RNA sequence: GGGAACGACUCGAGUAGAGUCGAAAAUCGCACCUCAUUCUGCAUUGGCUGUCUUAGAGGACACUGUUGAUUACCCUGCCCGCGCCCAUACUUUUGAUGACUUCUGCCCUGAGUGCCGUGCGCUCGGGAGGAGGAACAGGUUCGCCUGUUCCUCCUCAAAAGAAACAACAACAACAAC
Reactivity to DMS in 0.01 (KOAc 150mM, MgCl2 10mM, bicine 150mM(pH8.5), 24C), signal-to-noise 3, nucleotides 027 to 126: u010c070g020c040a100c020c010u000c060a100u000u000c050u000g020c050a100u000u000g010g000c050u000g020u010c050u000u000a100g030a090g010g010a080c080a070c100u000g020u010u000g010a120u010u010a130c050c010c020u000g000c030c020c030g020c120g020c020c010c020a070u000a040c070u000u000u000u000g000a090u010g010a110c070u000u000c050u000g020c040c020c010u020g010a040g010u000g010c020c180g010u000g010c040g010c000u000c030g000g000
Reactivity to 2A3 in 0.01 (KOAc 150mM, MgCl2 10mM, bicine 150mM(pH8.5), 24C), signal-to-noise 2, nucleotides 027 to 126: u030c010g010c010a030c000c030u010c030a070u120u000c020u070g000c020a060u060u170g120g010c030u040g070u070c010u020u110a060g000a050g090g030a000c020a040c090u050g110u180u110g050a100u000u080a060c020c000c030u010g040c010c010c000g000c020g000c000c030c010a080u040a170c040u100u120u100u110g100a110u090g020a050c000u080u000c030u090g080c010c020c010u010g010a010g000u010g000c030c090g110u150g000c030g010c000u000c000g040g010
The record gives the reactivity of an RNA of 177 nucleotides to DMS and 2A3.
DMS adducts were read by reverse transcription with MarathonRT.
The DMS profile rests on 3,299 reads.
For 2A3 the reverse transcriptase was SuperScript II with manganese.
For 2A3, 2,012 sequencing reads were counted.
Source: RMDB library OK2TST, as collected in RNAgym.